[RMDB]
RNA sequence: GGGAACGACUCGAGUAGAGUCGAAAAGAUACCGUUCGCUAUGCGUGUGGUGUCAAAACUGAGUGAGGUGCGCACGUUGUCCGAACAGGUGUAUGACGACAUAGUGCGGUCCGGAGAACUGGUGCUAGGUAACGGCUGGGAAGAUGCGGCUCCAGGAUGUUCUACGCACUUUCGAGUGCGUAGAACAAAAAGAAACAACAACAACAAC
Reactivity to 2A3 in 0.01 (KOAc 150mM, MgCl2 10mM, bicine 150mM(pH8.5), 24C), signal-to-noise 1, nucleotides 027 to 156: g000a000u030a010c000c000g020u010u000c050g000c060u190a080u300g000c040g000u010g020u050g020g070u020g020u030c050a050a110a020a040c130u100g010a010g030u090g000a010g100g000u130g060c000g000c010a000c040g040u050u020g030u080c000c020g000a070a010c020a080g000g150u120g020u120a150u140g090a010c050g000a000c000a030u140a090g020u030g040c030g000g090u120c050c030g070g030a020g020a030a040c010u060g000g000u030g040c040u050a030g000g040u040a070a000c010g080g000c070u040g000g080g000a110a020g030a040u110g030c000g020g040c000u040c000c000a000g050g010a060